[RMDB]
Background:
The record gives the reactivity of an RNA of 177 nucleotides to 2A3 and DMS. For 2A3 the reverse transcriptase was SuperScript II with manganese. It was measured as part of the RMDB libraries RFM100 and RFMREP.
RNA sequence: GGGAACGACUCGAGUAGAGUCGAAAAAGGAAUGAAUUCUUCCGAAAGAAUCAGUGGUAACAUUGUAGUAUGAGGAGGUUGGACUAGUGUUGCAUCGUCCGUCUUGAAACACGGGCCAGGGAGUUCUUAUCCAAUUAUAUUUCGAUAUAAUUGGAUAAAAAGAAACAACAACAACAAC
Reactivity to 2A3 in 0.01 (KOAc 150mM, MgCl2 10mM, bicine 150mM(pH8.5), 24C), signal-to-noise 9, nucleotides 027 to 126: a000g110g020a070a020u100g040a060a110u140u030c010u050u000c020c010g060a100a070a020g040a010a040u060c030a010g020u020g050g020u050a070a040c010a040u030u070g050u070a060g030u020a040u120g040a030g030g010a010g020g030u050u060g020g030a030c030u050a060g060u010g030u110u080g030c030a060u070c060g040u010c000c010g000u030c030u040u120g070a070a030a000c040a010c020g000g020g000c020c030a050g030g020g020a080g030u060u000c000u020
Reactivity to DMS in 0.01 (KOAc 150mM, MgCl2 10mM, bicine 150mM(pH8.5), 24C), signal-to-noise 8, nucleotides 027 to 126: a080g010g020a070a050u020g010a140a100u010u010c070u010u000c030c030g000a120a100a070g000a110a080u010c040a030g030u000g000g000u020a080a090c040a030u010u010g000u010a050g010u020a050u010g010a200g000g010a040g000g010u000u000g000g000a060c060u000a060g020u000g000u000u010g010c080a040u020c200g000u010c020c030g010u000c030u000u000g020a120a090a090c290a030c030g000g000g000c020c080a070g000g000g000a090g000u000u000c060u000